[RMDB]
RNA sequence: GGGAACGACUCGAGUAGAGUCGAAAAUCUCUCACGUUCGAGAGAACGAUCGUACGAGUGAACUCUCACGUUCUCUCGAGAGAACUCACUCACUCGAGUUCACUCGAGUGUUCGUGUACACGAGAGAGAUCGUUCACACACUCGAGAACUCUCGAGAGUGGGCCGCAUUCUUCGGAAUGCGGCCCACAAAAGAAACAACAACAACAAC
Reactivity to 2A3 in 0.01 (KOAc 150mM, MgCl2 10mM, bicine 150mM(pH8.5), 24C), signal-to-noise 1, nucleotides 027 to 156: u000c000u000c010u010c030a050c180g180u150u130c080g020a000g000a030g010a030a000c020g050a120u200c180g050u300a060c160g000a000g030u150g110a140a080c030u040c010u030c140a050c020g000u000u010c000u000c000u010c020g000a000g000a000g020a000a000c030u030c010a010c000u000c000a000c010u000c000g000a040g000u080u020c030a050c000u000c000g010a000g000u030g010u120u140c140g030u010g020u040a010c000a000c050g010a030g010a010g010a010g040a150u000c040g010u000u010c000a000c000a000c000a000c000u000c000g000a000g020a140a050c030u030c000u010c130g150a110g000a020
The data come from the RNA Mapping Database (RMDB), library OK3TST. Structure probing data (2A3) for a 207-nucleotide construct. The reactions ran in a buffer of 150 mM KOAc, 10 mM MgCl2 and 150 mM bicine (pH 8.5), at 24 C. Reactivities are given for positions 27 through 156. As a SHAPE reagent, 2A3 marks flexible, mostly unpaired nucleotides at the ribose 2'-OH.